RNA sequence: GGGAACGACUCGAGUAGAGUCGAAAACGCGUGACCCAGGAACUGUGCGACACGCUCGCCGAACACCAUCCGCUGUGGAUGAACAUUCACGUCAACCACCCCAAGGAAAUCACCCCCGAAGUGGCCGUAAUCAGCGCAUAUUCGUAUGCGCUGAUUAAAAAGAAACAACAACAACAAC
Reactivity to DMS in 0.01 (KOAc 150mM, MgCl2 10mM, bicine 150mM(pH8.5), 24C), signal-to-noise 3, nucleotides 027 to 126: c140g010c030g050u000g010a120c010c020c020a120g000g030a140a100c150u000g020u010g030c010g010a050c050a100c090g000c080u000c080g020c040c020g010a070a080c140a080c130c020a020u010c030c040g040c190u000g000u000g020g010a020u000g000a060a080c110a100u000u010c050a040c020g000u000c010a080a150c040c020a080c030c010c010c020a090a150g010g010a070a060a050u010c110a210c050c000c010c000c020g000a030a040g010u010g010g000c090c090g000
Reactivity to 2A3 in 0.01 (KOAc 150mM, MgCl2 10mM, bicine 150mM(pH8.5), 24C), signal-to-noise 1, nucleotides 027 to 126: c030g030c000g010u040g000a040c000c030c050a010g080g030a090a100c050u140g070u090g060c000g030a000c010a020c260g080c030u030c020g090c060c010g010a050a000c060a060c020c000a010u040c020c000g070c220u260g160u280g110g000a020u030g050a020a000c010a050u090u020c030a030c060g040u040c040a070a070c040c020a040c010c020c000c000a010a030g070g030a050a140a080u110c030a130c000c010c000c000c000g030a040a000g020u020g030g000c000c000g000
The record gives the reactivity of an RNA of 177 nucleotides to DMS and 2A3. Reactivities are given for positions 27 through 126. The DMS profile rests on 1,576 reads. The 2A3 profile rests on 1,009 reads. Conditions: 150 mM KOAc, 10 mM MgCl2 and 150 mM bicine (pH 8.5), 24 C. It was measured as part of the RMDB library OK2TST.